Annotation:
This 207-nucleotide RNA was probed chemically with 2A3. It was measured as part of the RMDB library M2RFPK. The reactions ran in a buffer of 150 mM KOAc, 10 mM MgCl2 and 150 mM bicine (pH 8.5), at 24 C.

RNA sequence: GGGAACGACUCGAGUAGAGUCGAAAAGCAAGCUAGCCGGCAAAAAAGCAAACUUGACCACCAAGGAUAAAAGAGAUCUUAUCCAAGGGUGCAAAAGAUAAUCUCACUUUUGACACCCACUGAUCUCAAAACGUGCGGUUCUUCGGAACCGCACGAAGUAUGACGCACUGUUCGCAGUGCGUCAUACAAAAGAAACAACAACAACAAC
Reactivity to 2A3 in 0.01 (KOAc 150mM, MgCl2 10mM, bicine 150mM(pH8.5), 24C), signal-to-noise 2, nucleotides 027 to 156: g030c000a020a000g010c000u070a020g020c000c030g110g020c160a050a050a070a160a000a000g050c080a070a050a040c050u040u060g100a090c030c020a020c040c040a100a080g050g010a050u040a050a070a040a040g010a010g000a000u000c010u020u020a010u070c080c130a120a120g010g000g000u000g000c000a020a000a010a000g020a060u140a210a130u210c050u050c060a090c000u090u040u020u000g100a110c010a000c020c000c000a020c030u020g000a000u020c010u000c010a030a050a000a000c000g000u010g010c000g000g010u000u000c010u040u020c110g080g000a000a000c000c000g010c000a000c020g000a000a000